[RMDB]
RNA sequence: GGGAACGACUCGAGUAGAGUCGAAAAGAUGAGAACAUACUGUUCAGUUGGGCUAUCAGGUGACACUCCAAAUCUUGCAGGAGGUCACGAGCAAGACAAAGAGGACGGCCUGACUUAACAAAAGAAAGCGUAUGAUAGCUUUCGAGCUAUCAUACGCAAAAGAAACAACAACAACAAC
Reactivity to 2A3 in 0.01 (KOAc 150mM, MgCl2 10mM, bicine 150mM(pH8.5), 24C), signal-to-noise 2, nucleotides 027 to 126: g200a060u280g040a000g040a090a000c030a050u150a260c070u000g030u000u000c000a000g010u000u010g000g000g000c000u020a030u210c110a020g030g130u000g000a000c090a130c080u030c000c020a030a060a100u110c150u120u230g020c100a100g030g000a020g000g000u000c020a000c000g000a020g020c050a110a050g070a090c080a030a150a040g120a040g080g100a000c100g020g010c000c000u020g000a010c090u010u010a000a000c000a000a120a050a000g160a050a100a000
Reactivity to DMS in 0.01 (KOAc 150mM, MgCl2 10mM, bicine 150mM(pH8.5), 24C), signal-to-noise 1, nucleotides 027 to 126: g000a020u010g000a220g010a040a070c070a000u010a010c040u070g020u000u000c100a000g000u000u000g000g010g090c010u000a100u080c000a170g050g070u000g020a000c110a040c000u000c000c080a070a080a250u000c060u040u000g020c100a130g020g010a110g000g000u000c050a000c040g000a030g060c070a000a140g000a060c080a080a190a060g020a140g040g010a000c030g000g000c000c110u000g000a010c000u000u000a030a080c030a000a180a160a000g050a150a000a030